The record gives the reactivity of an RNA of 177 nucleotides to DMS.

[RMDB]
RNA sequence: GGGAACGACUCGAGUAGAGUCGAAAAGAUAUGGAUGUCGUUGGGAGAGGUAUCUUAUCAACUAAUAGUUCGGAAACGAACUAUUAGUUGAUAAGAUAUACCUCAUCGAUCAACGCAUCCUAAGUCACAUGCGACAUUAGUUCGCUAAUGUCGCAUGAAAAGAAACAACAACAACAAC
Reactivity to DMS in 0.01 (KOAc 150mM, MgCl2 10mM, bicine 150mM(pH8.5), 24C), signal-to-noise 2, nucleotides 027 to 126: g000a070u010a300u000g000g010a030u010g020u020c030g060u000u000g000g010g000a070g010a000g020g020u000a020u000c000u000u000a010u000c000a020a010c000u000a000a000u000a010g000u000u000c000g020g010a180a120a280c000g000a010a040c000u000a000u000u000a000g000u000u000g000a000u000a010a000g000a050u000a020u000a020c010c000u000c010a170u000c140g010a080u020c000a010a000c000g000c020a000u000c000c020u000a020a140g010u000c040a300
For DMS, 2,117 sequencing reads were counted. The reactions ran in a buffer of 150 mM KOAc, 10 mM MgCl2 and 150 mM bicine (pH 8.5), at 24 C.